Chemical mapping of a 177-nucleotide RNA with 2A3.
[RMDB]
RNA sequence: GGGAACGACUCGAGUAGAGUCGAAAAUACAGUAUUUUUUCAAUAUUGUAAAACUUCUCAUUUACUUUGUGUCUUUAUGAUCUCAUCGUUCUGGUGGACCAUAAUCAGACGCACGGUAUACUUCGUUCGAUAGCAAUCCAUUCGUGGAUUGCUAUCGAAAAGAAACAACAACAACAAC
Reactivity to 2A3 in 0.01 (KOAc 150mM, MgCl2 10mM, bicine 150mM(pH8.5), 24C), signal-to-noise 4, nucleotides 027 to 126: u020a000c000a000g010u000a020u000u050u000u020u040u260c030a010a000u000a000u010u010g000u000a020a030a090a130c030u020u000c010u000c010a080u090u120u000a010c010u000u010u010g010u000g000u010c000u000u020u000a010u000g040a030u000c160u000c050a010u000c000g300u300u120c160u300g010g000u000g000g010a010c010c000a000u000a000a030u110c110a000g010a000c000g000c010a000c030g020g010u020a060u030a070c050u050u080c040g090u030u000

The reactions ran in a buffer of 150 mM KOAc, 10 mM MgCl2 and 150 mM bicine (pH 8.5), at 24 C. The 2A3 profile rests on 2,767 reads. As a SHAPE reagent, 2A3 marks flexible, mostly unpaired nucleotides at the ribose 2'-OH. The data come from the RNA Mapping Database (RMDB), library RFM100.